[RMDB]
RNA sequence: GGGAACGACUCGAGUAGAGUCGAAAACUGACGGAGACCCUUGAACUGACCGCCACGGCUGACAUGCCUGAUGAAGUGCGCGCAAAGCUGCACAAAAUCACCGGUCUGUUUCUGCGUGACGGUGGUGAUGCCGCCGGUGCGCUGGCGCACCUGCAACCUUAUCACAGCAGUUCGCUGCUGUGAUAAGAAAAGAAACAACAACAACAAC
Reactivity to DMS in 0.01 (KOAc 150mM, MgCl2 10mM, bicine 150mM(pH8.5), 24C), signal-to-noise 1, nucleotides 027 to 156: c060u000g020a040c020g020g010a180g000a130c000c010c000u000u000g010a080a140c050u000g030a060c040c030g040c020c030a020c030g020g000c010u000g000a050c070a090u000g020c030c010u000g000a010u000g010a110a300g020u000g000c010g000c000g050c040a090a110a300g020c020u020g080c010a020c020a030a050a240a130u010c010a040c020c020g050g020u020c150u000g010u010u000u000c000u000g020c010g020u000g000a040c030g030g060u000g040g030u000g000a100u000g010c010c010g050c020c050g000g010u000g020c020g050c060u000g030g020c010g010c010a030c020c000u000g000c050a050a120c140
Reactivity to 2A3 in 0.01 (KOAc 150mM, MgCl2 10mM, bicine 150mM(pH8.5), 24C), signal-to-noise 4, nucleotides 027 to 156: c050u050g070a030c040g090g020a040g090a080c010c020c010u030u090g070a070a000c020u060g120a030c000c000g020c000c020a020c010g120g010c050u050g050a030c020a040u080g020c000c010u040g010a040u030g030a110a050g010u000g000c020g010c020g000c070a140a140a160g020c080u200g000c080a000c000a010a130a000a010u020c010a010c030c080g000g000u010c000u010g010u000u150u040c080u070g000c010g010u010g010a010c010g000g020u030g010g000u080g020a060u140g060c020c040g000c020c040g020g000u020g010c020g000c050u120g110g020c040g000c030a000c010c010u030g000c010a020a090c000

An RNA of 207 nucleotides, treated with DMS and 2A3 and read out base by base. For DMS, 3,168 sequencing reads were counted. For 2A3, 3,574 sequencing reads were counted. It was measured as part of the RMDB library OK3TST. For DMS the reverse transcriptase was MarathonRT. For 2A3 the reverse transcriptase was SuperScript II with manganese.